Structure probing data (DMS) for a 177-nucleotide construct. Conditions: 150 mM KOAc, 10 mM MgCl2 and 150 mM bicine (pH 8.5), 24 C.
[RMDB]
RNA sequence: GGGAACGACUCGAGUAGAGUCGAAAAGAUAUGGAACCAGUAUCAAUUGCCUUUUGCCGAUAAGAUAUAUUCGGAAACGAAUAUUAUCUUUUGACGGCGGAGGCAAUUGAUACUGGUUCCUAAGUCACUGUCUUACUAGGUUCGCCUAGUAAGACAGAAAAGAAACAACAACAACAAC
Reactivity to DMS in 0.01 (KOAc 150mM, MgCl2 10mM, bicine 150mM(pH8.5), 24C), signal-to-noise 1, nucleotides 027 to 126: g020a080u010a300u000g000g020a060a000c000c000a020g000u000a000u000c000a000a010u010u000g010c010c000u020u000u000u010g100c010c010g010a240u000a030a010g010a020u000a010u000a010u000u000c000g010g000a130a070a250c010g010a000a000u000a010u010u010a020u000c000u010u000u010u010g000a190c140g020g030c020g000g010a000g000g050c000a000a000u000u040g010a000u000a000c010u000g000g010u000u000c000c000u000a000a060g040u020c040a300